[RMDB]
RNA sequence: GGGAACGACUCGAGUAGAGUCGAAAACAGCGGCUCCGCGCUUGGCACAACAAUGGUAUGCGUGGUUUGCGGCCCUAAUUUAUUCAGCACGCGACUGCCGCAUCCCGCACGGGAGGCGCAGCUGCUGCAGAACGGAUACGUUCGCGUAUCCGUUCUGAAAAGAAACAACAACAACAAC
Reactivity to DMS in 0.01 (KOAc 150mM, MgCl2 10mM, bicine 150mM(pH8.5), 24C), signal-to-noise 1, nucleotides 027 to 126: c000a050g000c010g020g070c000u010c130c150g040c000g000c010u000u010g000g000c110a140c260a100a050c280a090a160u000g020g000u000a130u000g000c020g010u000g040g020u030u000u010g090c000g000g000c040c100c120u010a080a070u000u000u010a070u010u010c140a040g020c000a080c040g010c080g010a010c080u000g040c040c040g000c020a040u000c000c000c010g000c130a060c130g000g000g010a080g010g030c010g010c040a060g010c030u010g010c000u000g010
Reactivity to 2A3 in 0.01 (KOAc 150mM, MgCl2 10mM, bicine 150mM(pH8.5), 24C), signal-to-noise 2, nucleotides 027 to 126: c020a030g050c000g030g000c010u050c100c080g000c000g010c040u040u050g070g000c090a060c040a230a150c070a060a300u210g030g070u170a030u070g030c030g010u120g000g020u040u030u120g000c020g030g040c060c000c000u080a120a120u140u170u210a150u130u180c070a040g030c050a020c050g080c040g030a020c060u030g050c050c040g010c000a000u010c000c010c000g000c020a020c050g060g000g000a030g000g000c000g000c000a010g020c010u000g020c000u020g040
Structure probing data (DMS and 2A3) for a 177-nucleotide construct. DMS adducts were read by reverse transcription with MarathonRT. It was measured as part of the RMDB library RFMREP. Values cover nucleotides 27 to 126.